[RMDB]
This 177-nucleotide RNA was probed chemically with 2A3. Conditions: 150 mM KOAc, 10 mM MgCl2 and 150 mM bicine (pH 8.5), 24 C. 2A3 adducts were read by reverse transcription with SuperScript II with manganese.
RNA sequence: GGGAACGACUCGAGUAGAGUCGAAAAUCUAUUUAAAUGUCGUUCACUAUAACAACUAAUUUGUGAAAUGUUUUUAACAGACAUAAUAGAGUUUUGUUUUCUAGCAUUUUCAAGAAUUGGUAUAGUCGGGACGACUAGUAUUCGUACUAGUCGUCCCAAAAGAAACAACAACAACAAC
Reactivity to 2A3 in 0.01 (KOAc 150mM, MgCl2 10mM, bicine 150mM(pH8.5), 24C), signal-to-noise 4, nucleotides 027 to 126: u010c010u010a040u040u040u050a200a230a120u180g000u010c000g000u000u010c040a050c210u060a090u070a270a050c120a050a000c040u050a010a040u010u000u040g140u010g000a000a000a000u000g020u000u010u000u010u020a010a000c010a000g040a020c010a020u250a200a120u220a210g260a060g090u020u070u210u030g020u000u120u030u000c060u030a020g000c000a000u000u000u000u180c040a060a020g010a050a060u010u020g030g020u030a050u040a190g200u140c110